RNA sequence: GGGAACGACUCGAGUAGAGUCGAAAAAACUCUGGCGGUACAGUCCUCAUAGUGUACGGUUUGCUGUGGAUCACUUUCAUUUCCAUAUGUGUUGCGUCGUCGCUCUCGGAGCUUGCCAGUGCCAUGCCAAACGCUGGAGGCCAAUACUUCUGGGCUAAAUCUAACUCGGAUUCGUCCGAGUUAGAUUAAAAGAAACAACAACAACAAC
Reactivity to 2A3 in 0.01 (KOAc 150mM, MgCl2 10mM, bicine 150mM(pH8.5), 24C), signal-to-noise 2, nucleotides 027 to 156: a010a010c010u030c000u020g020g020c030g050g100u120a070c070a020g040u100c030c010u070c060a050u140a100g110u070g030u070a030c020g020g010u060u120u120g000c010u030g000u020g030g030a040u100c030a050c080u090u200u100c100a130u060u050u000c050c020a070u080a050u190g070u040g060u150u120g050c040g030u030c000g030u030c010g010c010u040c000u020c070g070g000a010g000c070u110u070g040c080c020a010g010u000g080c020c000a040u100g000c000c010a000a200a000c050g000c020u040g020g000a030g040g000c040c020a050a090u090a120c000u090u090c030u060g040g030g000c040u100a120
Reactivity to DMS in 0.01 (KOAc 150mM, MgCl2 10mM, bicine 150mM(pH8.5), 24C), signal-to-noise 1, nucleotides 027 to 156: a030a030c030u030c020u010g000g030c020g010g020u000a090c060a120g010u000c020c010u000c030a080u000a080g040u000g010u000a050c080g020g010u000u000u000g030c030u010g060u030g000g010a010u000c060a080c090u000u010u000c030a130u000u040u010c000c000a100u020a060u030g000u000g000u010u010g030c010g070u000c080g010u000c050g020c000u010c020u000c020g030g020a080g020c050u000u000g010c000c000a040g020u000g050c020c040a090u030g000c080c030a060a040a060c050g050c020u000g010g000a150g010g010c010c050a030a080u000a050c050u000u010c050u000g010g000g020c020u010a090